[RMDB]
RNA sequence: GGGAACGACUCGAGUAGAGUCGAAAACACCGAGUUUGCCUCUAAUUCCUCGGUGUUGUCACUUGUUAACUUCACCGUUGAUCCUCAAAAAGCUUAUCUCGAUUUCGUCAAUGCGGGAGGUGCCCCAGGUAAUCUUAUCGUUCGCGAUAAGAUUACCAAAAGAAACAACAACAACAAC
Reactivity to 2A3 in 0.01 (KOAc 150mM, MgCl2 10mM, bicine 150mM(pH8.5), 24C), signal-to-noise 3, nucleotides 027 to 126: c010a000c000c010g000a010g000u050u120u110g080c040c010u080c050u120a090a100u160u040c020c000u010c000g000g010u000g000u000u000g020u010c030a060c050u060u050g050u110u120a070a020c010u050u010c030a030c060c010g010u010u030g020a030u040c030c010u060c040a060a060a030a050a020g030c060u090u070a060u100c040u020c030g100a100u060u060u060c010g070u040c060a070a090u090g040c040g010g030g010a020g010g010u030g030c010c000c000c030a010
Reactivity to DMS in 0.01 (KOAc 150mM, MgCl2 10mM, bicine 150mM(pH8.5), 24C), signal-to-noise 2, nucleotides 027 to 126: c040a030c020c000g000a040g010u000u000u000g010c080c050u030c090u000a090a160u000u000c160c010u000c000g000g030u010g000u010u010g010u010c050a050c130u010u000g030u010u000a090a070c060u020u010c060a100c110c050g030u010u000g000a090u010c040c040u040c120a040a050a070a100a060g010c070u000u020a100u010c010u000c040g010a140u000u000u030c090g000u000c080a030a080u020g020c080g030g000g000a050g000g000u000g000c050c000c000c070a100
Description
The record gives the reactivity of an RNA of 177 nucleotides to 2A3 and DMS. 2A3 adducts were read by reverse transcription with SuperScript II with manganese. Conditions: 150 mM KOAc, 10 mM MgCl2 and 150 mM bicine (pH 8.5), 24 C. The 2A3 profile rests on 2,839 reads. DMS adducts were read by reverse transcription with MarathonRT.